This 177-nucleotide RNA was probed chemically with 2A3 and DMS. It was measured as part of the RMDB library OK1LIB. 2A3 adducts were read by reverse transcription with SuperScript II with manganese.
RNA sequence: GGGAACGACUCGAGUAGAGUCGAAAACAAGGUUCACCAUAGUCGCUGACGAUAGAAUGUUCGCGUCGGGCGAAAGAACGCCGGAGUAGCAUGACAACCGACUGAUGGAAUAGGAAACAAAACAAAAGCUAGUGAGCGACUUCGGUCGUUCGCUAGCAAAAGAAACAACAACAACAAC
Reactivity to 2A3 in 0.01 (KOAc 150mM, MgCl2 10mM, bicine 150mM(pH8.5), 24C), signal-to-noise 5, nucleotides 027 to 126: c040a020a060g160g020u050u030c010a050c100c000a020u040a000g000u000c010g000c050u030g030a040c060g040a040u050a060g130a080a100u150g020u120u050c040g000c020g200u030c030g070g020g000c050g030a130a130a020g080a120a030c010g000c020c000g030g010a020g010u070a010g020c020a010u050g010a030c020a010a020c050c000g010a010c030u050g090a050u020g040g010a050a060u050a120g070g010a070a020a050c070a030a070a030a000c090a020a140a010a010
Reactivity to DMS in 0.01 (KOAc 150mM, MgCl2 10mM, bicine 150mM(pH8.5), 24C), signal-to-noise 8, nucleotides 027 to 126: c050a120a100g010g020u010u010c080a100c020c010a050u010a040g000u000c010g030c070u010g010a100c170g010a130u030a080g020a140a060u010g000u000u000c110g010c010g000u010c010g010g010g000c010g010a060a130a100g030a110a100c040g000c000c020g010g010a100g010u010a040g000c010a020u000g000a150c100a100a090c140c010g000a030c010u000g020a010u000g000g010a090a100u010a080g000g000a060a040a030c050a050a040a100a070c200a050a040a080a090